Description: The record gives the reactivity of an RNA of 207 nucleotides to 2A3 and DMS. 2A3 is a SHAPE reagent: it acylates the 2'-hydroxyl of flexible nucleotides of all four kinds. The RNA was probed in 150 mM KOAc, 10 mM MgCl2 and 150 mM bicine (pH 8.5) at 24 C. For 2A3, 2,135 sequencing reads were counted. Values cover nucleotides 27 to 156.
[RMDB]
RNA sequence: GGGAACGACUCGAGUAGAGUCGAAAACGGCUAUUGGCUGGGUUUACAAUUGCUGCACUGGUACUGCCGAGACCAUAGCGUUGAGUUACUUAACGUUUGUGGUGUCCGUGUUUACUAAUUACACAGGUGUUGCAUGUAUAUCUGUGUACGUGUCACACAAUGGCCAAACUUUCGAGUUUGGCCAUUGAAAAGAAACAACAACAACAAC
Reactivity to 2A3 in 0.01 (KOAc 150mM, MgCl2 10mM, bicine 150mM(pH8.5), 24C), signal-to-noise 3, nucleotides 027 to 156: c010g030g040c030u070a050u100u150g070g000c060u070g000g040g010u050u040u060a070c050a130a070u070u070g030c010u010g000c020a030c050u040g030g000u060a050c020u040g040c000c020g010a020g020a000c010c010a030u040a000g000c000g000u000u000g020a020g030u250u190a120c030u030u010a030a000c000g040u020u170u190g020u040g010g010u020g050u000c010c040g020u020g000u070u050u030a020c020u000a050a110u090u030a050c010a000c000a010g050g000u030g030u070u070g040c060a080u040g100u060a040u020a010u040c010u000g050u020g010u030a050c090g070u040g040u070c050a040c020a000
Reactivity to DMS in 0.01 (KOAc 150mM, MgCl2 10mM, bicine 150mM(pH8.5), 24C), signal-to-noise 1, nucleotides 027 to 156: c010g040g020c000u000a060u000u000g020g000c070u000g010g020g030u010u010u000a100c050a070a150u010u000g020c030u000g000c010a110c060u000g020g010u000a030c010u000g020c010c040g000a140g000a060c010c010a020u010a070g000c010g030u010u000g010a020g030u000u000a100c090u000u000a080a020c010g020u000u000u000g100u000g030g010u000g010u000c020c060g010u020g040u010u000u000a130c020u000a050a110u010u010a040c030a030c010a060g000g000u000g010u000u000g010c140a140u000g050u000a030u000a010u010c040u010g000u000g010u000a000c120g030u000g000u000c120a090c040a140